RNA sequence: GGGAACGACUCGAGUAGAGUCGAAAAAUGGAUCACUACCGUUUUGCAAAGAAGAUAUAUCUUGGAAUUGAUAACAUACACGUCAUGAGGGAUUCUUUAAAUAAAAUUGUGAAUGCUCUUAAAAAUACAGAUAUUAGUGCGGCACCUCCAUUGAUAACCUAGUAGGGUCAUUCGUGACCCUACUAGGAAAAGAAACAACAACAACAAC
Reactivity to 2A3 in 0.01 (KOAc 150mM, MgCl2 10mM, bicine 150mM(pH8.5), 24C), signal-to-noise 1, nucleotides 027 to 156: a000u030g020g000a010u060c010a030c090u050a010c040c030g000u000u000u080u240g020c100a100a120a000g040a090a000g030a030u080a000u010a050u220c090u010u120g050g040a140a080u080u000g030a040u100a170a030c080a010u150a060c000a030c130g030u060c010a040u060g060a030g000g000g000a000u120u000c030u050u140u300a040a080a030u170a010a130a040a080u170u200g000u010g000a010a000u050g020c010u000c000u010u050a150a000a000a000a000u080a080c000a000g060a050u010a040u100u190a040g040u060g050c010g000g020c000a000c010c000u000c070c000a040u110u140g040a030u200a040a000